[RMDB]
RNA sequence: GGGAACGACUCGAGUAGAGUCGAAAAGAAGGGUGAAAGCCCUUGAUACUGUAGUGGAAAGUAUAAAUAAGAAGAGUUCUGAGUUGCUUAAGCAGAACUAAAAUAAAAAGACAAGCAUUAUUACAAACAUGGCGAGGUAAGUUCGCUUACCUCGCAACCUUCCCCACAAGUUCGCUUGUGGGGAAGGAAAAGAAACAACAACAACAAC
Reactivity to 2A3 in 0.01 (KOAc 150mM, MgCl2 10mM, bicine 150mM(pH8.5), 24C), signal-to-noise 1, nucleotides 027 to 156: g030a000a000g040g000g010u060g100a020a000a010g030c000c000c000u020u010g000a010u060a060c020u050g090u150a100g090u040g040g000a020a160a050g000u010a110u040a150a160a060u100a060a000g040a040a020g020a000g030u010u000c000u000g010a020g030u020u090g060c020u080u040a060a000g000c000a000g030a000a000c090u100a010a000a000a000u080a000a030a030a000a000g030a000c000a020a010g000c000a000u120u060a040u130u090a160c060a060a080a030c040a130u120g130g020c020g000a010g000g000u010a040a000g010u010u040c120g040c090u000u000a000c000c000u010c000g000c000a000a000